[RMDB]
Chemical mapping of a 177-nucleotide RNA with DMS. Conditions: 150 mM KOAc, 10 mM MgCl2 and 150 mM bicine (pH 8.5), 24 C. For DMS the reverse transcriptase was MarathonRT. Source: RMDB library TTRINS, as collected in RNAgym.
RNA sequence: GGGAACGACUCGAGUAGAGUCGAAAAGAUAUGGAAUGUACAGGGAGCUGUGUAAGUCAAUAGAGGUAAUCGGAAACGAUUACCUCUAUUGACUUACAAACAGCGUUGAUCUGUGCAUUCCUAAGUCGAAAUAUAUAUCCUUCGGGAUAUAUAUUUCAAAAGAAACAACAACAACAAC
Reactivity to DMS in 0.01 (KOAc 150mM, MgCl2 10mM, bicine 150mM(pH8.5), 24C), signal-to-noise 1, nucleotides 027 to 126: g010a110u010a300u000g000g000a010a010u020g000u000a000c000a010g000g000g000a020g040c000u000g000u000g010u000a010a020g000u010c000a010a010u000a000g020a040g030g000u000a010a000u010c000g020g020a140a150a240c010g000a010u000u000a020c000c000u000c000u000a000u000u000g000a010c000u010u000a010c010a020a070a120c000a020g010c000g010u000u010g010a020u000c000u000g000u000g000c000a000u000u000c000c000u000a000a110g010u020c100